[RMDB]
RNA sequence: GGGAACGACUCGAGUAGAGUCGAAAAACAAACCCCUGAGGUAGAAAGUCCCAAAGCUCGUGCUAAAGCAUCUGCCGUUUAGUGUUGCAGUUUAGCCUUUUGUACCUUUCCACGGCUUUUCUGUGUCGCUUCGUUGGCUAUUCGUAGCCAACGAAGCAAAAGAAACAACAACAACAAC
Reactivity to 2A3 in 0.01 (KOAc 150mM, MgCl2 10mM, bicine 150mM(pH8.5), 24C), signal-to-noise 1, nucleotides 027 to 126: a000c040a010a110a010c000c000c000c000u120g080a000g060g000u040a000g030a000a060a000g010u000c010c020c000a140a050a000g030c040u020c030g100u140g030c030u070a050a020a000g010c000a060u030c030u030g010c000c040g020u100u110u130a020g050u080g010u080u010g000c010a000g050u000u100u110a010g030c000c010u000u020u110u070g070u120a140c040c000u000u080u140c010c070a080c070g010g000c030u000u040u070u000c040u000g130u050g080u080c000